[RMDB]
RNA sequence: GGGAACGACUCGAGUAGAGUCGAAAAGACGAGGCCAUGCGUCUGUAUGGCAACAACAUAACCUUCCACUUUGAGCGCCAGCUGCAGGGGUUAGACUUGGAGAGACAACUAGCUACAUUCAAAGAUGCGUUAAAGCUUUUUUCGAAAAGCUUUAACGAAAAGAAACAACAACAACAAC
Reactivity to 2A3 in 0.01 (KOAc 150mM, MgCl2 10mM, bicine 150mM(pH8.5), 24C), signal-to-noise 5, nucleotides 027 to 126: g050a020c080g020a040g090g000c020c000a010u040g000c020g110u220c300u230g020u030a020u020g010g000c020a060a020c010a030a010c020a130u150a090a050c010c000u040u060c030c020a050c060u080u080u110g050a040g010c040g010c040c050a010g020c030u060g000c040a040g060g000g060g000u030u040a030g010a040c010u020u060g030g020a090g000a000g010a060c010a050a030c070u040a000g000c000u030a020c020a040u030u070c020a040a030a060g050a070u110g050
Reactivity to DMS in 0.01 (KOAc 150mM, MgCl2 10mM, bicine 150mM(pH8.5), 24C), signal-to-noise 6, nucleotides 027 to 126: g020a090c220g010a090g020g020c020c030a020u000g020c020g000u000c150u010g020u000a030u000g000g020c030a060a070c080a060a200c100a050u010a070a100c050c040u000u010c030c020a100c110u000u000u010g010a090g000c070g030c040c050a030g000c050u000g000c070a070g010g010g010g020u010u000a040g000a090c050u000u000g020g000a080g000a130g000a060c080a050a070c090u000a050g000c030u010a030c040a050u000u010c060a050a060a090g010a060u010g000
This 177-nucleotide RNA was probed chemically with 2A3 and DMS. It was measured as part of the RMDB library OK2TRN. For DMS, 6,539 sequencing reads were counted. 2A3 is a SHAPE reagent: it acylates the 2'-hydroxyl of flexible nucleotides of all four kinds. For DMS the reverse transcriptase was MarathonRT.